Structure probing data (2A3) for a 177-nucleotide construct. Values cover nucleotides 27 to 126.
RNA sequence: GGGAACGACUCGAGUAGAGUCGAAAAUCGGUUCUUCUUCACGCCCCCACAGUUGGGGAUGCACUCUGAUUAGCUAAUUCAUAGAAUGGCUGGUCACUUCAAGGGUGUAUCGGAUUCUGUGGUGAGCCUCUGGAUCGGUCUUCGGACCGAUCCAGAGAAAAGAAACAACAACAACAAC
Reactivity to 2A3 in 0.01 (KOAc 150mM, MgCl2 10mM, bicine 150mM(pH8.5), 24C), signal-to-noise 1, nucleotides 027 to 126: u160c000g000g090u050u030c060u160u050c000u060u070c090a090c140g020c000c000c000c000c000a000c000a080g030u050u000g000g070g000g000a000u000g000c000a000c000u040c000u060g000a000u000u000a000g000c000u080a300a090u070u060c080a160u050a300g000a000a000u070g000g000c000u000g040g000u000c020a000c090u180u140c160a150a150g000g000g000u000g020u000a000u000c000g020g010a040u020u000c000u000g000u010g000g000u000g020a090g030c020
Overview:
It was measured as part of the RMDB library RFM100. The 2A3 profile rests on 444 reads.